[RMDB]
RNA sequence: GGGAACGACUCGAGUAGAGUCGAAAAUUGAAAUGCUAACCCUGAAGUAAACGUGAGGAAUGUAGGUUCUUGUGUGUAAAGCAUACUGCCUUCACUGAUUGGACUGAGAAGGACCCUUACAAGUGACACCGGACGAUAAAUUCGUUUAUCGUCCGGUAAAAGAAACAACAACAACAAC
Reactivity to DMS in 0.01 (KOAc 150mM, MgCl2 10mM, bicine 150mM(pH8.5), 24C), signal-to-noise 2, nucleotides 027 to 126: u010u000g000a090a110a130u010g020c110u000a090a100c050c000c010u000g010a080a100g000u000a040a150a100c080g000u000g000a060g010g000a170a100u010g010u000a090g060g000u000u000c030u000u010g010u030g050u010g030u040a020a070a050g010c040a090u000a080c140u000g000c070c030u010u000c050a000c030u020g010a180u000u000g000g010a070c020u000g030a120g010a050a050g000g000a090c170c030c020u010u000a100c110a070a050g000u020g010a150c220
Reactivity to 2A3 in 0.01 (KOAc 150mM, MgCl2 10mM, bicine 150mM(pH8.5), 24C), signal-to-noise 1, nucleotides 027 to 126: u100u130g030a030a020a070u050g000c020u040a110a110c010c000c000u040g080a030a010g050u130a040a080a030c040g070u110g000a020g070g030a090a010u110g030u120a000g060g060u020u000c010u110u070g050u000g000u000g040u220a060a030a030g060c000a010u100a110c090u160g040c000c000u050u020c030a020c000u000g040a200u030u100g040g020a000c040u000g000a000g000a150a050g030g050a020c020c000c000u030u110a040c040a070a150g050u020g120a000c020